[RMDB]
RNA sequence: GGGAACGACUCGAGUAGAGUCGAAAAGCGCACAAUCCGUGGCUGUCGGUCUCGCCGGUGUCGGAGUACAACGGUGAUCCGGCUUGGGCCGCCGACUAUCCCGACGUGUCGGCGCCGCGCGGUCUGCCUCAAGGGGAUCGUUCGCGAUCCCCUUGAGAAAAGAAACAACAACAACAAC
Reactivity to 2A3 in 0.01 (KOAc 150mM, MgCl2 10mM, bicine 150mM(pH8.5), 24C), signal-to-noise 3, nucleotides 027 to 126: g070c120g000c050a010c060a060a170u030c020c020g040u020g150g000c070u020g030u030c030g010g010u010c020u000c130g000c010c000g040g000u030g000u020c060g130g060a170g060u180a040c020a060a000c020g020g000u030g000a030u000c000c000g020g030c040u030u060g040g000g000c070c050g010c020c000g040a030c030u010a080u110c030c040c000g000a080c060g040u100g020u020c010g000g000c000g000c000c000g030c000g000c000g000g030u030c040u030g030c010
Reactivity to DMS in 0.01 (KOAc 150mM, MgCl2 10mM, bicine 150mM(pH8.5), 24C), signal-to-noise 2, nucleotides 027 to 126: g000c070g020c130a050c090a090a030u040c030c060g000u000g000g020c070u000g050u020c010g020g000u050c210u010c050g000c010c000g050g020u000g030u000c000g020g080a100g010u040a040c030a100a060c090g000g000u000g000a010u010c030c010g010g000c030u000u060g000g000g000c090c060g060c010c070g000a010c070u020a170u040c100c010c020g000a120c180g000u020g000u000c010g000g010c060g000c000c000g030c120g000c050g000g030u020c110u040g000c160